[RMDB]
RNA sequence: GGGAACGACUCGAGUAGAGUCGAAAAAACCUGAUUUUGUUGAAGUACUUCCAGGUGUUGCGAGUAAAGCGAUUCAUCAUAUUCAGAAAGAAACAAACACACAAGUCAUUGCAGGUGGCCUAAUUAAUGGUUAAACUCAUUUCGAUGAGUUUAACCAAAAAGAAACAACAACAACAAC
Reactivity to DMS in 0.01 (KOAc 150mM, MgCl2 10mM, bicine 150mM(pH8.5), 24C), signal-to-noise 3, nucleotides 027 to 126: a060a090c040c000u010g010a110u000u000u000u000g010u000u000g010a070a130g010u000a060c040u000u000c120c070a040g010g010u000g000u000u010g000c090g020a130g000u000a040a060a090g010c040g020a070u000u010c050a030u000c040a040u000a060u010u010c100a060g010a050a070a090g010a080a070a070c090a060a060a080c100a040c140a040c070a040a050g010u000c080a060u010u000g010c070a050g000g030u000g000g000c010c030u000a060a060u010u000a070a150